Structure probing data (2A3 and DMS) for a 177-nucleotide construct. As a SHAPE reagent, 2A3 marks flexible, mostly unpaired nucleotides at the ribose 2'-OH. The reactions ran in a buffer of 150 mM KOAc, 10 mM MgCl2 and 150 mM bicine (pH 8.5), at 24 C. It was measured as part of the RMDB library OK2TST. Reactivities are given for positions 27 through 126.
[RMDB]
RNA sequence: GGGAACGACUCGAGUAGAGUCGAAAACUCCAGGCUGGUAGUGAAUGGGCAUGUCGUAGCCAGCAAAGGGACCCAUGCGAGCCUUGCGGCUCAGGUGAAGACUGUGCAGAACGGUACGACGAAGCGACCGUCAUACUACGUUCGCGUAGUAUGACGGAAAAGAAACAACAACAACAAC
Reactivity to 2A3 in 0.01 (KOAc 150mM, MgCl2 10mM, bicine 150mM(pH8.5), 24C), signal-to-noise 2, nucleotides 027 to 126: c030u010c000c000a020g030g050c020u020g000g060u090a160g040u060g140a060a070u140g020g110g000c050a060u100g020u020c020g010u010a020g030c000c000a020g010c020a020a060a020g050g020g020a040c000c000c040a020u100g090c050g010a010g000c000c060u090u160g050c120g020g010c000u000c030a000g000g080u060g010a030a030g020a050c040u040g000u040g050c000a050g030a150a030c020g030g030u060a010c020g000a020c070g010a100a010g010c020g080a060
Reactivity to DMS in 0.01 (KOAc 150mM, MgCl2 10mM, bicine 150mM(pH8.5), 24C), signal-to-noise 4, nucleotides 027 to 126: c110u010c010c030a160g000g020c040u000g020g010u000a080g020u010g000a090a100u000g000g000g010c070a100u010g010u000c030g020u010a150g000c040c020a090g020c030a040a090a100g000g000g020a100c090c010c020a080u010g010c190g000a030g000c000c010u000u020g010c250g030g030c010u000c020a050g000g000u010g000a090a120g000a070c030u010g000u000g000c050a090g020a050a040c090g000g000u000a040c060g000a060c040g020a090a070g010c080g000a140